[RMDB]
Annotation
Conditions: 150 mM KOAc, 10 mM MgCl2 and 150 mM bicine (pH 8.5), 24 C. Chemical mapping of a 177-nucleotide RNA with DMS. In probing experiments dimethyl sulfate is read out at A N1 and C N3, which are open when not base-paired. For DMS the reverse transcriptase was MarathonRT.
RNA sequence: GGGAACGACUCGAGUAGAGUCGAAAAGAUAUGGAGAGGCUAGUUGAUCGGGUUCGACUGAACUACGUGCAAUACUCGGAAACGAGUAUGCACGCAGUCGAACCCGAUCAAGGCCUCUCCUAAGUCACACUCAUAUUUACUUCGGUAAAUAUGAGUGAAAAGAAACAACAACAACAAC
Reactivity to DMS in 0.01 (KOAc 150mM, MgCl2 10mM, bicine 150mM(pH8.5), 24C), signal-to-noise 3, nucleotides 027 to 126: g020a070u010a300u010g020g020a010g010a010g000g030c000u000a100g020u000u010g020a010u010c000g000g010g020u000u000c000g010a030c000u000g010a130a050c190u010a300c020g010u000g020c010a070a090u000a010c000u010c000g010g010a100a110a260c000g000a010g020u000a000u000g020c010a000c000g000c000a000g000u000c000g010a010a000c000c010c000g000a000u000c000a010a020g010g000c000c010u000c000u000c000c000u000a010a050g020u000c030a300